[RMDB]
RNA sequence: GGGAACGACUCGAGUAGAGUCGAAAACUGGUCGCCGAAUGGGCCAAAGCCGACGAGUUGGUGUUGUCCAAGUUGCGCGAGCGGCUGGGCUUCGGCGAGCUGCGGUGGGCCCUGUCCGGAGCGGCGCCGGAUAGCAGCCGUUCGCGGCUGCUAUCCGAAAAGAAACAACAACAACAAC
Reactivity to DMS in 0.01 (KOAc 150mM, MgCl2 10mM, bicine 150mM(pH8.5), 24C), signal-to-noise 1, nucleotides 027 to 126: c040u000g030g020u010c000g020c010c010g010a130a090u000g000g020g040c010c070a100a120a280g010c020c010g010a080c030g000a080g000u000u020g000g070u010g000u010u000g020u000c020c020a060a060g020u000u000g020c050g010c260g020a180g010c010g010g000c010u000g020g010g010c000u000u000c010g030g010c040g000a090g020c020u000g000c020g000g000u000g010g020g020c020c050c010u000g000u020c010c030g010g020a110g020c020g040g020c020g000c130
Annotation: Structure probing data (DMS) for a 177-nucleotide construct. The data come from the RNA Mapping Database (RMDB), library OK2TST. The DMS profile rests on 1,506 reads.